[RMDB]
RNA sequence: GGGAACGACUCGAGUAGAGUCGAAAAUGAAACUGCAGCCAGCCAGUGCCAGGCUCAGCGCCACCGUCGCGACGGCCGCCGUGAAGUGCUUCAUUGCGCGCUCCCGAAGAUUGGACCGGCACUUCCGAGCUGGGCCGAUCUUCGGAUCGGCCCAGCUAAAAGAAACAACAACAACAAC
Reactivity to DMS in 0.01 (KOAc 150mM, MgCl2 10mM, bicine 150mM(pH8.5), 24C), signal-to-noise 1, nucleotides 027 to 126: u000g000a160a050a070c060u000g000c120a070g000c020c150a160g000c140c030a020g060u000g070c060c040a130g000g020c000u000c060a060g020c110g000c060c070a180c070c020g000u060c170g000c060g000a070c030g000g000c030c000g000c080c060g000u000g000a100a150g000u000g040c030u000u000c130a110u000u000g000c020g000c010g000c060u010c060c020c040g000a090a080g000a060u000u000g050g000a030c090c020g000g000c000a000c080u040u050c000c090g020
Reactivity to 2A3 in 0.01 (KOAc 150mM, MgCl2 10mM, bicine 150mM(pH8.5), 24C), signal-to-noise 2, nucleotides 027 to 126: u130g000a040a090a020c050u070g030c030a040g040c010c010a020g020c020c030a040g050u070g040c000c040a090g010g000c000u030c040a030g010c000g030c000c000a080c000c000g040u060c020g040c050g050a020c000g010g030c030c000g000c030c010g060u110g040a040a000g070u020g110c040u020u140c080a140u020u220g040c000g030c000g000c080u070c000c020c000g030a070a000g020a060u090u170g000g000a010c020c020g000g000c040a000c050u050u020c000c030g060